[RMDB]
RNA sequence: GGGAACGACUCGAGUAGAGUCGAAAACCAGCGAGAGGCGUGGAGAGAGGGCCGCGGUGCUCUGGAGUAGAGGCUCUGCCUUCGAAACACCAUCGAUCGUCCCUUCUUCUUUACCUUCUUCUGGCUCUUCGUGGAGACGCGACCGGUGGCACCCCUGCGUAAAAUUGUAGUUCGCUACAAUUUUACGAAAAGAAACAACAACAACAAC
Reactivity to DMS in 0.01 (KOAc 150mM, MgCl2 10mM, bicine 150mM(pH8.5), 24C), signal-to-noise 2, nucleotides 027 to 156: c000c010a100g010c120g000a090g000a070g000g040c060g010u010g010g030a130g010a130g000a070g020g010g030c060c030g020c040g040g030u000g020c020u010c030u010g010g030a290g010u000a110g000a140g030g000c010u050c180u010g050c030c030u000u000c030g030a300a220a260c030a030c160c010a070u000c020g000a090u000c020g030u000c010c000c000u000u000c010u000u010c020u010u000u000a060c010c040u010u000c040u000u010c030u010g010g010c000u000c040u000u000c030g000u000g030g000a220g000a130c050g010c040g000a110c050c030g000g080u000g010g010c020a140c040c010c020c060u000g030
Reactivity to 2A3 in 0.01 (KOAc 150mM, MgCl2 10mM, bicine 150mM(pH8.5), 24C), signal-to-noise 3, nucleotides 027 to 156: c000c000a000g020c090g030a000g000a010g030g030c160g040u000g020g010a010g000a000g000a010g010g000g010c010c010g040c010g010g000u000g000c000u000c000u020g010g000a010g000u010a000g000a010g000g010c050u070c240u300g050c030c000u170u180c010g010a020a010a000c010a040c150c010a000u010c000g060a300u040c010g020u010c000c000c000u060u060c020u080u020c000u000u020u010a010c000c000u010u020c000u020u010c010u010g000g020c020u010c010u080u070c040g030u050g010g040a130g000a070c030g020c020g060a040c030c050g040g020u030g030g030c050a080c010c020c000c020u040g020
This 207-nucleotide RNA was probed chemically with DMS and 2A3. The data come from the RNA Mapping Database (RMDB), library VIROID. The DMS profile rests on 3,532 reads. For 2A3 the reverse transcriptase was SuperScript II with manganese. The RNA was probed in 150 mM KOAc, 10 mM MgCl2 and 150 mM bicine (pH 8.5) at 24 C. DMS adducts were read by reverse transcription with MarathonRT.